[RMDB]
RNA sequence: GGGAACGACUCGAGUAGAGUCGAAAACGAGCACAGCCCGCUCGGCCUCUAGGUUAUGAGGGGGAAUUUUUCCCUUGAGUUCCUGAGUGGGAUUAGGCAUGCCCGGCACAGAACCUCCUCCGAGGAAAUCAUAUCCUAUCUUCGGAUAGGAUAUGAUAAAAGAAACAACAACAACAAC
Reactivity to DMS in 0.01 (KOAc 150mM, MgCl2 10mM, bicine 150mM(pH8.5), 24C), signal-to-noise 6, nucleotides 027 to 126: c050g010a050g010c040a080c120a140g000c020c010c040g010c010u000c010g010g000c270c010u010c080u020a030g000g010u030u020a050u000g000a240g000g010g010g000g010a010a040u020u030u030u040u010c000c000c000u000u010g000a290g000u000u000c050c000u010g010a050g020u010g000g000g000a060u020u020a080g010g010c060a090u030g020c020c020c020g000g000c100a070c110a090g000a080a090c030c000u000c020c030u020c050c070g000a090g000g000a060a100
Reactivity to 2A3 in 0.01 (KOAc 150mM, MgCl2 10mM, bicine 150mM(pH8.5), 24C), signal-to-noise 9, nucleotides 027 to 126: c030g010a010g030c040a040c030a120g040c000c010c010g010c000u010c000g030g020c010c000u030c040u080a110g080g070u270u120a110u210g060a110g020g020g000g020g110a020a040u180u110u030u100u090c000c000c000u010u030g040a040g000u070u100c020c040u040g010a010g010u060g010g010g030a060u090u190a130g060g000c040a020u070g010c000c000c000g030g020c060a080c010a070g080a110a080c000c000u010c000c000u040c030c070g040a050g030g060a070a130